[RMDB]
RNA sequence: GGGAACGACUCGAGUAGAGUCGAAAAUGAGAAGUCGUCAGUACUUCGACGUGAGCAGAAGCCCGCCUCGAUAUGCUAUGUGGACGAGGGCAUGCCCAAGACACACCUUAACCCUAGCGGGACGCAACAGUUUUCCUUGGUUCGCCAAGGAAAACUGAAAAGAAACAACAACAACAAC
Reactivity to DMS in 0.01 (KOAc 150mM, MgCl2 10mM, bicine 150mM(pH8.5), 24C), signal-to-noise 1, nucleotides 027 to 126: u020g020a110g010a090a020g060u080c020g000u010c250a070g070u000a060c020u000u020c020g000a150c140g060u010g040a030g000c020a040g000a090a130g000c010c000c040g000c040c060u000c070g000a070u010a160u000g020c050u000a150u000g010u010g010g010a010c040g000a300g000g030g010c040a080u010g000c000c000c050a090a160g000a120c050a040c050a040c210c080u010u000a050a090c020c000c010u000a090g020c110g000g020g020a000c270g000c060a010a220
Conditions: 150 mM KOAc, 10 mM MgCl2 and 150 mM bicine (pH 8.5), 24 C. The record gives the reactivity of an RNA of 177 nucleotides to DMS. For DMS the reverse transcriptase was MarathonRT.